An RNA of 207 nucleotides, treated with 2A3 and DMS and read out base by base. For DMS the reverse transcriptase was MarathonRT. It was measured as part of the RMDB library OK3TST.
RNA sequence: GGGAACGACUCGAGUAGAGUCGAAAAACUAAGUCAGGGUGAACACCUUGCAGCCGUUGCAGGCUCCGAGAACCUAAUUUAAAGCCCAUACUUACCUCCUCUAUUAUUGGUUGAACUUCCAUUGUAUCAAAUUUAAUCGCGGAGGGUGAGGGCCGGAGCUAGUUUGAUCUUUCGAGAUCAAACUAGCAAAAGAAACAACAACAACAAC
Reactivity to 2A3 in 0.01 (KOAc 150mM, MgCl2 10mM, bicine 150mM(pH8.5), 24C), signal-to-noise 3, nucleotides 027 to 156: a000c050u060a080a010g060u110c040a030g000g030g030u060g170a140a020c050a050c070c000u000u020g000c010a020g000c020c030g080u150u290g080c150a140g020g020c010u040c010c050g050a080g060a140a100c020c040u090a130a230u100u100u150a100a080a010g000c030c000c010a050u110a140c040u050u130a090c000c000u000c000c000u000c010u000a010u060u010a010u030u050g260g010u040u070g020a030a020c020u220u130c140c130a160u130u150g040u040a190u090c010a000a030a020u020u050u010a000a000u020c010g010c020g000g000a000g010g000g000u050g020a060g010g000g030c010c020g040g000a010
Reactivity to DMS in 0.01 (KOAc 150mM, MgCl2 10mM, bicine 150mM(pH8.5), 24C), signal-to-noise 2, nucleotides 027 to 156: a120c030u000a050a070g020u010c030a050g000g030g030u000g000a110a120c070a070c080c010u010u000g020c070a070g020c020c100g010u000u000g030c150a160g070g020c020u000c020c040g010a130g010a070a080c050c010u020a020a040u000u010u000a030a080a070g010c000c000c010a160u000a090c150u000u000a100c000c010u000c010c000u000c060u000a050u000u020a060u000u000g000g000u020u020g020a080a090c030u010u010c100c100a160u010u000g000u020a230u000c020a040a010a070u000u000u000a010a040u000c050g020c140g000g020a040g010g020g010u000g010a120g000g000g030c020c020g020g000a300